[RMDB]
RNA sequence: GGGAACGACUCGAGUAGAGUCGAAAAAGUAGUAUUCGUACUACUGCAAAGGGGUCGUAUAUGAAAGCCUUUUGACGCUCUGAAGCCUCCACGGAGCGAUAAGGAACUACUUUCAAAUACGACGGAGGCACCCAGUGAUUGUACUUUCGAGUACAAACACAGGUAUGAAGUUCGCUUCAUACCUGUGAAAAGAAACAACAACAACAAC
Reactivity to DMS in 0.01 (KOAc 150mM, MgCl2 10mM, bicine 150mM(pH8.5), 24C), signal-to-noise 2, nucleotides 027 to 156: a000g070u000a030g020u000a010u010u020c210g070u020a010c000u000a030c010u010g010c070a050a130a120g010g020g070g040u010c020g000u010a030u000a160u000g020a010a000a010g020c000c110u010u000u000u000g000a300c060g000c020u040c020u010g000a050a120g050c010c000u000c000c030a300c020g020g000a010g020c000g030a070u000a020a080g010g030a060a080c110u010a050c010u000u010u000c020a020a050a040u000a000c120g010a030c030g040g010a040g040g020c010a140c010c020c010a300g050u010g010a130u000u000g000u000a010c010u000u020u000c300g060a100g010u010a020c000a040a010a240
Reactivity to 2A3 in 0.01 (KOAc 150mM, MgCl2 10mM, bicine 150mM(pH8.5), 24C), signal-to-noise 3, nucleotides 027 to 156: a010g000u000a010g000u010a040u060u130c200g020u050a010c000u000a000c000u000g050c070a090a150a090g080g080g060g000u000c000g000u010a000u000a020u050g000a000a010a030g100c010c000u060u040u060u100g210a080c060g010c000u060c000u010g030a100a040g010c000c000u000c020c000a030c020g000g000a000g010c030g020a030u060a090a020g050g010a100a160c120u150a090c000u280u000u000c030a100a050a020u000a000c050g000a000c010g000g000a010g010g000c000a020c010c010c000a000g050u050g220a170u090u030g000u020a000c000u100u110u100c190g080a020g010u000a000c000a000a020a050

The record gives the reactivity of an RNA of 207 nucleotides to DMS and 2A3.
Values cover nucleotides 27 to 156.
For DMS the reverse transcriptase was MarathonRT.
The 2A3 profile rests on 2,453 reads.
The RNA was probed in 150 mM KOAc, 10 mM MgCl2 and 150 mM bicine (pH 8.5) at 24 C.
For DMS, 2,791 sequencing reads were counted.